[RMDB]
RNA sequence: GGGAACGACUCGAGUAGAGUCGAAAAUCUUCAGGGUCUAAAGAUCAAGUGGGCCUUGGAUCGCUAAGCUGGCUCUGUUUGAUGCUAUUUAUGCAAGUUAGGGUCUAUGUAUUUAUGAUGUCUGCACCUUCUGCAGCCAGUCAGAAGCUGGAGAGGACCGCAUUAGGGUAUUCGUACCCUAAUGCGGAAAAGAAACAACAACAACAAC
Reactivity to 2A3 in 0.01 (KOAc 150mM, MgCl2 10mM, bicine 150mM(pH8.5), 24C), signal-to-noise 2, nucleotides 027 to 156: u030c020u070u070c000a000g020g010g000u020c030u110a140a130a080g030a170u210c080a130a020g050u150g000g010g040c010c040u050u020g000g000a080u050c040g030c150u130a080a160g050c030u000g020g000c000u040c000u080g070u080u010u060g050a050u050g000c020u050a120u160u260u110a110u230g030c070a080a060g020u170u080a050g020g000g010u050c010u080a080u090g060u000a090u060u060u000a100u140g030a020u070g020u060c020u070g030c020a050c000c040u090u110c000u100g040c020a000g000c010c000a010g020u010c030a000g000a100a000g000c030u000g050g020a030g000a020g040g120a030